[RMDB]
RNA sequence: GGGAACGACUCGAGUAGAGUCGAAAAGAGACUAAAAUGUCAGAUGGAGUCUGCUUUAUUAUUAUUAUGUAGACUUUUUGUGAUAUCUAUCGUAAUAAUAAUAAUCCGAAUAGUGGAUAUCACUUAAGGGAUAAGUUAACUUCGGUUAACUUAUCCCAAAAGAAACAACAACAACAAC
Reactivity to DMS in 0.01 (KOAc 150mM, MgCl2 10mM, bicine 150mM(pH8.5), 24C), signal-to-noise 1, nucleotides 027 to 126: g000a040g020a000c010u040a010a040a160a030u050g000u020c230a050g000a170u000g000g020a090g010u010c000u060g000c020u000u000u000a000u000u040a010u040u000a010u010u020a020u020g010u000a130g000a020c010u020u000u020u020u000g040u010g000a010u000a110u000c000u000a040u020c040g020u020a020a020u000a010a030u000a000a020u000a030a070u060c000c010g000a060a090u070a240g000u010g000g000a010u000a000u010c040a020c000u000u070a040a100
Reactivity to 2A3 in 0.01 (KOAc 150mM, MgCl2 10mM, bicine 150mM(pH8.5), 24C), signal-to-noise 2, nucleotides 027 to 126: g070a000g000a000c040u130a100a050a100a190u300g040u170c130a060g070a120u190g130g000a030g010u020c000u020g060c000u200u010u000a000u070u030a040u050u010a030u030u040a070u090g010u010a030g020a060c000u080u040u020u090u250g030u020g000a020u030a010u020c000u010a000u100c020g030u010a010a000u050a090a000u040a060a000u060a060a000u120c010c060g020a090a060u090a170g040u060g000g030a050u020a040u070c010a000c000u000u030a090a030

The record gives the reactivity of an RNA of 177 nucleotides to DMS and 2A3. The RNA was probed in 150 mM KOAc, 10 mM MgCl2 and 150 mM bicine (pH 8.5) at 24 C.